[RMDB]
RNA sequence: GGGAACGACUCGAGUAGAGUCGAAAACGGAUGAAGGUCUACCGCGACGAGACCGCGCCGCUGCUGGAGUACUACCGCGACCAAUUGAAGACCGUCGACGCCGUCGGCACCAUGGACGAGGUGUUCGUCCUGAAGAGCCAUUCGUGGCUCUUCAGGAAAAAGAAACAACAACAACAAC
Reactivity to DMS in 0.01 (KOAc 150mM, MgCl2 10mM, bicine 150mM(pH8.5), 24C), signal-to-noise 3, nucleotides 027 to 126: c060g010g000a100u020g010a110a050g000g020u000c040u000a160c060c060g010c060g020a080c100g000a070g010a050c050c040g000c060g000c020c020g010c050u000g030c040u000g000g010a100g010u010a080c060u010a060c030c030g020c030g010a100c050c050a060a180u010u010g030a090a070g010a080c050c050g000u000c010g000a050c080g000c090c020g000u000c040g000g000c020a050c030c040a080u010g010g010a050c080g000a060g020g000u000g020u010u000c050g000
Reactivity to 2A3 in 0.01 (KOAc 150mM, MgCl2 10mM, bicine 150mM(pH8.5), 24C), signal-to-noise 2, nucleotides 027 to 126: c010g040g000a060u100g070a170a040g030g010u020c010u030a090c030c020g100c030g010a060c030g020a030g020a040c000c040g020c040g000c040c000g060c040u030g000c010u040g080g040a080g030u050a030c030u040a040c030c000g050c010g050a070c000c060a040a090u060u150g080a140a050g050a060c000c010g010u040c020g010a090c080g030c050c050g060u060c020g010g000c020a020c020c020a070u140g040g000a020c010g030a040g000g050u030g100u090u080c020g040

An RNA of 177 nucleotides, treated with DMS and 2A3 and read out base by base. Source: RMDB library OK2TRN, as collected in RNAgym.